The data come from the RNA Mapping Database (RMDB), library M2PK50. This 177-nucleotide RNA was probed chemically with DMS. The reactions ran in a buffer of 150 mM KOAc, 10 mM MgCl2 and 150 mM bicine (pH 8.5), at 24 C.
RNA sequence: GGGAACGACUCGAGUAGAGUCGAAAAUCCUCACGUUUCGACGUGAGGAGAACUCUAGCAAGGGAAGGGAACCCUCGGGAAGGCCUCCCAAGGCGAUCUCAACAAGGGCCAAAUUCGUUUGGCCCAAUGUGCGUUCUUAGUUCGCUAAGAACGCACAAAAAGAAACAACAACAACAAC
Reactivity to DMS in 0.01 (KOAc 150mM, MgCl2 10mM, bicine 150mM(pH8.5), 24C), signal-to-noise 1, nucleotides 027 to 126: u000c000c030u000c000a010c000g020u010u000u000c120g000a020c000g030u000g020a030g050g000a010g000a020a040c050u000c020u000a140g020c050a190a120g020g000g020a190a110g000g040g000a020a220c000c030c000u000c120g000g000g030a050a110g020g000c120c020u000c070c040c050a070a090g020g000c000g010a030u000c000u010c020a100a070c200a050a120g040g000g000c000c000a020a000a020u000u020c120g000u010u000u000g000g090c000c000c000a010a010